RNA sequence: GGGAACGACUCGAGUAGAGUCGAAAAAGAAAUUGCGAUAAUCGUAAGAGAAAUGUCCUUCACAUAGCGCUACGCACAGAACUAUUAGUAGCGCAAUAGCUAUUGAAGGACAUUACCUGCCAAAAAAGAUACUGAUAUGCUUCGGCAUAUCAGUAUCAAAAGAAACAACAACAACAAC
Reactivity to 2A3 in 0.01 (KOAc 150mM, MgCl2 10mM, bicine 150mM(pH8.5), 24C), signal-to-noise 3, nucleotides 027 to 126: a000g070a000a070a020u070u020g030c020g020a030u170a220a140u250c020g030u030a060a020g040a010g070a080a040a030u000g000u020c000c000u000u000c010a060c010a050u070a000g020c000g000c020u040a010c010g050c090a080c050a200g260a230a060c100u110a120u300u110a030g010u010a000g000c000g000c000a000a010u010a000g000c020u040a030u060u080g010a000a000g000g000a000c000a000u010u000a020c000c000u040g080c020c030a150a200a030a020a010a000
Reactivity to DMS in 0.01 (KOAc 150mM, MgCl2 10mM, bicine 150mM(pH8.5), 24C), signal-to-noise 3, nucleotides 027 to 126: a100g020a070a100a080u000u020g000c000g010a260u010a090a120u000c020g030u000a040a070g000a110g010a070a020a030u010g000u000c000c000u000u000c000a030c300a030u000a000g010c000g010c040u000a020c010g020c090a070c130a090g020a060a100c180u000a100u000u010a080g030u000a100g000c010g010c040a020a030u010a130g010c050u000a000u000u000g020a020a020g010g000a000c030a000u000u000a050c080c010u000g010c140c150a010a090a020a040a100a070